[RMDB]
RNA sequence: GGGAACGACUCGAGUAGAGUCGAAAAUGACUAUUUGUAUGAAAAUUUGUAUUUAAGUGUCUAAAUGCAGCCUCACCUGUGCUUUUCCCCCAUGGUGUGGCAUAAGAAAACAAUUGGUGACACAAGCAGACACACUAUGUUUCGACAUAGUGUGUCUAAAAGAAACAACAACAACAAC
Reactivity to DMS in 0.01 (KOAc 150mM, MgCl2 10mM, bicine 150mM(pH8.5), 24C), signal-to-noise 3, nucleotides 027 to 126: u000g010a070c060u000a080u010u010u000g010u020a080u000g000a100a090a060a100u010u010u000g000u000a020u010u000u010a020a110g020u000g010u000c020u000a020a020a020u000g000c020a110g010c000c020u000c010a020c020c010u000g040u010g030c060u010u010u000u000c020c010c010c300c050a010u000g000g010u010g000u010g010g020c010a100u010a040a130g000a080a050a080a070c100a030a070u020u010g030g000u010g010a030c020a010c000a150a160g000c290
Reactivity to 2A3 in 0.01 (KOAc 150mM, MgCl2 10mM, bicine 150mM(pH8.5), 24C), signal-to-noise 2, nucleotides 027 to 126: u070g020a020c030u030a030u260u150u250g240u080a220u190g130a060a040a080a170u140u150u240g020u000a040u020u020u000a140a030g010u020g000u020c010u030a030a030a030u040g000c020a000g000c000c000u000c000a020c000c020u080g040u090g150c020u200u020u020u050c000c010c000c010c000a010u000g010g000u000g000u020g000g000c000a010u040a030a000g160a020a070a020a020c020a030a200u110u180g120g050u110g060a000c020a010c010a010a000g070c010